RNA sequence: GGGAACGACUCGAGUAGAGUCGAAAAGAUAUGGAUGUAUGAGGGAGAGCGUCGGAAACGACGGCUCUUUGAUCUCAUCACAUCCUAAGUCAAAACUUCCCAAAUCUCUUCGGAGAUUUGGGAAGAACCCUUGUCAGUAGUUCGCUACUGACAAGGGAAAAGAAACAACAACAACAAC
Reactivity to 2A3 in 0.01 (KOAc 150mM, MgCl2 10mM, bicine 150mM(pH8.5), 24C), signal-to-noise 2, nucleotides 027 to 126: g020a030u060a030u110g000g000a020u000g000u020a000u010g000a010g010g120g000a010g000a010g000c000g000u010c010g030g000a110a090a000c020g020a000c030g260g150c000u010c020u070u080u020g020a010u020c000u000c010a030u040c070a000c000a020u030c030c000u000a110a010g040u050c020a010a010a120a290c020u010u010c050c010c000a000a020a000u000c010u000c000u050u120c270g130g000a000g000a000u030u010u010g000g020g020a000a000g000a000a010
Reactivity to DMS in 0.01 (KOAc 150mM, MgCl2 10mM, bicine 150mM(pH8.5), 24C), signal-to-noise 1, nucleotides 027 to 126: g010a050u000a280u020g000g000a020u010g000u000a000u000g020a000g010g010g000a000g000a020g010c000g000u000c000g020g010a080a070a110c010g010a010c000g020g000c000u000c000u000u000u010g000a050u010c010u000c000a000u000c190a040c000a010u000c000c000u000a000a090g000u020c020a060a110a140a180c000u000u000c000c000c000a000a000a000u000c000u000c000u000u010c180g000g000a020g000a010u000u000u000g020g000g000a000a000g000a040a080

The record gives the reactivity of an RNA of 177 nucleotides to 2A3 and DMS. The RNA was probed in 150 mM KOAc, 10 mM MgCl2 and 150 mM bicine (pH 8.5) at 24 C. For DMS the reverse transcriptase was MarathonRT. Values cover nucleotides 27 to 126. It was measured as part of the RMDB library TTRDEL.